[RMDB]
This 177-nucleotide RNA was probed chemically with DMS and 2A3. The 2A3 profile rests on 2,558 reads. DMS adducts were read by reverse transcription with MarathonRT. The RNA was probed in 150 mM KOAc, 10 mM MgCl2 and 150 mM bicine (pH 8.5) at 24 C.

RNA sequence: GGGAACGACUCGAGUAGAGUCGAAAAGAUAUGGAAGUAUAGUACACGCGUUGACUAUUCGGAAACGAACGAAUCAACGAACUACGUGGAACUACUUCCUAAGUCAAAAGGGUACUUCGGUACCCAACACUCAAAUAGGCUUCGGCCUAUUUGAGUGAAAAGAAACAACAACAACAAC
Reactivity to DMS in 0.01 (KOAc 150mM, MgCl2 10mM, bicine 150mM(pH8.5), 24C), signal-to-noise 2, nucleotides 027 to 126: g000a030u010a300u000g000g010a030a000g010u000a010u010a040g010u010a160c000a020c020g000c000g040u000u000g000a040c070u000a300u020u000c010g020g010a110a120a170c000g010a000a030c200g000a010a080u000c010a000a030c020g000a090a110c090u050a300c010g000u000g010g010a140a090c170u000a030c000u020u000c010c000u010a010a120g000u010c050a110a080a160a030g000g000g000u010a010c000u000u000c180g050g000u000a010c000c000c000a050a030
Reactivity to 2A3 in 0.01 (KOAc 150mM, MgCl2 10mM, bicine 150mM(pH8.5), 24C), signal-to-noise 2, nucleotides 027 to 126: g060a030u070a040u170g010g010a010a020g000u020a040u010a060g000u010a010c000a010c000g030c020g000u010u000g030a060c130u050a070u010u020c020g010g050a050a140a080c050g060a020a010c020g070a080a300u000c010a020a000c010g040a030a080c070u140a040c190g000u030g000g010a010a010c000u000a010c000u000u000c000c000u000a050a010g070u000c030a050a020a090a190g020g000g000u020a010c000u050u100c300g130g000u010a010c010c000c000a000a010